RNA sequence: GGGAACGACUCGAGUAGAGUCGAAAACUUACAACACCGGGUUCUAGGGUCCACUCGGACACUCGACGGGCGAGCACGCGGCGAGGGACCGCUUGUGCGUUAAAGUCCCAGUGCCCACCACUCAAAAGGGUUUAAUAAUCUUCGGAUUAUUAAACCCAAAAGAAACAACAACAACAAC
Reactivity to DMS in 0.01 (KOAc 150mM, MgCl2 10mM, bicine 150mM(pH8.5), 24C), signal-to-noise 2, nucleotides 027 to 126: c090u000u020a110c210a110a060c090a090c030c040g030g010g050u000u000c100u020a070g000g000g000u000c040c030a110c080u010c230g010g000a050c010a040c020u000c060g000a120c110g020g030g010c000g000a040g000c040a020c060g020c010g020g000c070g020a130g020g020g000a110c020c020g010c040u020u010g060u000g000c000g010u000u000a050a140a140g000u000c000c000c030a120g010u000g010c030c000c000a140c100c160a070c070u030c080a060a060a040a120
Reactivity to 2A3 in 0.01 (KOAc 150mM, MgCl2 10mM, bicine 150mM(pH8.5), 24C), signal-to-noise 5, nucleotides 027 to 126: c020u080u120a100c070a140a020c020a110c070c010g020g020g020u040u020c050u130a090g030g000g020u060c050c010a060c020u080c040g030g010a020c020a040c050u090c030g070a060c060g040g070g040c040g030a030g020c010a000c050g020c010g030g000c040g040a220g040g060g060a050c000c000g000c000u060u110g020u050g030c000g020u030u150a120a080a020g010u020c000c000c000a010g000u010g030c010c000c010a030c020c000a040c000u080c030a020a070a040a130
The record gives the reactivity of an RNA of 177 nucleotides to DMS and 2A3. DMS (dimethyl sulfate) methylates the pairing face of unpaired adenines and cytosines. DMS adducts were read by reverse transcription with MarathonRT.